Record summary: The record gives the reactivity of an RNA of 207 nucleotides to 2A3 and DMS. High 2A3 reactivity points to a flexible backbone, as in loops and unpaired stretches. Values cover nucleotides 27 to 156. For DMS the reverse transcriptase was MarathonRT.
[RMDB]
RNA sequence: GGGAACGACUCGAGUAGAGUCGAAAAGAAGCAGAUGCGGGCAUACCGGGGUCUCAGAUUCCCGUAAAACACUGAAUUCAAAUAGUCGCAAACGACGAAACUUACGCUUUAGCCGCUUAAGGCUAGCCGUUGCAGCAGUCGGUCAAUGGGCUGUGUGGUAGAAAUAUAAGUUCGCUUAUAUUUCUACAAAAGAAACAACAACAACAAC
Reactivity to 2A3 in 0.01 (KOAc 150mM, MgCl2 10mM, bicine 150mM(pH8.5), 24C), signal-to-noise 2, nucleotides 027 to 156: g060a060a000g030c030a000g010a050u050g030c050g000g050g030c080a070u090a110c060c020g070g000g000g000u010c020u030c050a010g000a040u140u130c000c020c000g040u110a000a000a000a040c020a000c020u060g020a050a020u180u040c050a090a080a040u100a090g010u010c040g010c120a090a120a120c050g060a010c040g020a060a030a020c060u070u090a040c030g010c010u230u000u090a000g010c020c010g100c180u150u180a120a040g020g010c010u000a010g000c000c020g020u050u070g010c030a020g000c010a010g020u040c080g060g000u020c020a030a070u050g020g010g000c020u000g010u020g000u000g110
Reactivity to DMS in 0.01 (KOAc 150mM, MgCl2 10mM, bicine 150mM(pH8.5), 24C), signal-to-noise 1, nucleotides 027 to 156: g030a090a120g040c040a100g010a130u010g040c040g010g000g050c060a120u000a100c170c080g000g000g040g000u000c060u010c050a080g020a200u000u000c010c000c030g010u000a030a080a070a090c070a090c020u000g030a090a160u000u000c100a120a140a190u000a040g000u000c000g020c050a070a030a120c030g000a000c010g000a070a050a040c040u000u000a090c100g000c070u000u010u000a060g040c030c000g000c010u000u010a090a110g030g010c000u000a060g010c020c030g020u000u010g000c040a090g020c000a110g030u000c020g010g050u000c070a090a040u020g010g020g000c000u000g020u020g020u010g020